[RMDB]
RNA sequence: GGGAACGACUCGAGUAGAGUCGAAAAUAAAAGCGUGGAGAAACGAGAGCAGAAAACUGCUUUUCAAACAGAGUAAAACCAAAAGGUUCCACGCACUCUGUCAAAAAGAUCGAAAGAUCAAAAAAAACAAUACUUAGUGGUUCGCCACUAAGUAUUGAAAAGAAACAACAACAACAAC
Reactivity to 2A3 in 0.01 (KOAc 150mM, MgCl2 10mM, bicine 150mM(pH8.5), 24C), signal-to-noise 1, nucleotides 027 to 126: u070a010a080a030a000g000c050g000u010g010g070a150g160a150a140a030c100g010a000g010a010g090c010a020g040a130a290a070a100c000u000g010c010u050u010u060u030c030a070a070a020c000a010g050a000g010u060a040a110a020a000c030c020a110a150a010a090g080g060u050u040c000c010a000c000g000c000a010c010u000c010u000g020u030c010a030a050a080a010a160g000a020u020c020g040a050a040a040g000a000u040c010a050a060a010a000a040a010a000a050
Reactivity to DMS in 0.01 (KOAc 150mM, MgCl2 10mM, bicine 150mM(pH8.5), 24C), signal-to-noise 2, nucleotides 027 to 126: u000a030a080a080a130g000c010g030u000g030g000a170g000a130a170a090c240g000a000g000a020g010c010a010g010a240a040a110a240c000u000g000c010u010u000u000u010c070a100a150a070c020a010g000a010g000u000a030a100a160a130c020c030a100a070a080a080g000g030u000u000c000c000a010c050g000c020a070c000u000c010u000g000u000c280a090a130a110a040a060g000a010u000c000g010a070a100a070g020a000u010c000a010a030a000a060a070a030a050a140